[RMDB]
RNA sequence: GGGAACGACUCGAGUAGAGUCGAAAACAUUACGAAUUCAGUCGCAAAUUGUAGGAUUAGCUACUCUACGAUUUAGUGAGCGUUAGUAACGUUGUAAUAUAAUAUAGUCUUUGGAAGGAUUAUAUUGGAGCCGCGGACAAGUUCGCUUGUCCGCGAACAUAGCUGUACAGUUCGCUGUACAGCUAUGAAAAGAAACAACAACAACAAC
Reactivity to DMS in 0.01 (KOAc 150mM, MgCl2 10mM, bicine 150mM(pH8.5), 24C), signal-to-noise 2, nucleotides 027 to 156: c040a060u010u010a010c020g020a080a140u010u000c050a060g010u000c020g020c000a060a040a050u000u000g030u000a010g010g000a060u000u010a180g020c230u000a050c020u010c000u000a020c000g010a030u000u010u000a100g020u000g010a030g060c100g020u000u010a040g000u000a020a040c050g010u020u000g020u000a080a120u000a080u000a030a030u000a020u000a020g020u000c010u000u010u000g020g000a220a220g000g000a020u000u010a030u000a030u000u020g020g000a170g010c090c000g060c000g030g000a020c010a020a010g000u000u000c300g010c010u000u000g050u000c010c000g040c000g010a000a050
Reactivity to 2A3 in 0.01 (KOAc 150mM, MgCl2 10mM, bicine 150mM(pH8.5), 24C), signal-to-noise 5, nucleotides 027 to 156: c040a040u110u190a040c040g070a110a130u130u140c050a070g070u050c030g000c030a010a010a010u020u020g000u010a000g010g050a050u120u070a040g050c050u090a050c030u000c010u040a000c000g010a010u000u020u090a080g010u020g030a060g070c030g030u050u120a050g010u060a090a050c040g000u000u010g020u040a100a080u090a080u020a130a000u000a000u000a010g000u000c020u070u100u130g140g040a120a080g040g000a010u010u000a000u000a020u010u020g060g050a070g090c060c010g000c010g000g000a000c000a000a000g010u040u140c180g050c150u000u010g000u000c000c010g010c010g000a000a000